An RNA of 177 nucleotides, treated with DMS and 2A3 and read out base by base. The reactions ran in a buffer of 150 mM KOAc, 10 mM MgCl2 and 150 mM bicine (pH 8.5), at 24 C. DMS adducts were read by reverse transcription with MarathonRT. Reactivities are given for positions 27 through 126.
RNA sequence: GGGAACGACUCGAGUAGAGUCGAAAAAGUAGCCUAAUUCUGCAACCCUCUUUAGGGUAUGUGUUAGCCAUAUUUUAGGAUGGAAACAUGAAUACAAGAUAUAUUUACUCUUGUUAGGUGAAAGUUGUCGAGAUAGAGAUUUCGAUCUCUAUCUCGAAAAAGAAACAACAACAACAAC
Reactivity to DMS in 0.01 (KOAc 150mM, MgCl2 10mM, bicine 150mM(pH8.5), 24C), signal-to-noise 3, nucleotides 027 to 126: a080g010u000a150g000c010c000u000a030a070u010u020c100u030g020c150a120a060c000c000c000u000c290u010u000u040a010g010g010g020u010a030u000g000u010g000u020u010a100g000c030c010a010u000a030u020u010u010u010a060g020g020a000u000g010g010a040a030a030c010a010u010g000a100a070u020a090c020a020a010g000a030u030a120u040a060u010u020u000a040c190u000c000u000u000g000u000u000a030g000g000u000g000a060a120a080g020u000u000g000
Reactivity to 2A3 in 0.01 (KOAc 150mM, MgCl2 10mM, bicine 150mM(pH8.5), 24C), signal-to-noise 5, nucleotides 027 to 126: a000g000u010a000g000c000c000u030a060a050u140u130c080u190g030c060a040a050c000c010c000u030c060u060u200u300a020g000g040g000u030a090u090g060u000g000u000u050a020g010c010c000a010u040a120u030u160u090u210a150g120g000a010u040g020g000a020a010a010c020a040u030g060a070a000u050a070c010a020a010g040a000u020a000u020a080u160u240u110a080c060u030c000u000u010g010u010u000a000g000g020u030g010a020a010a040g040u050u040g030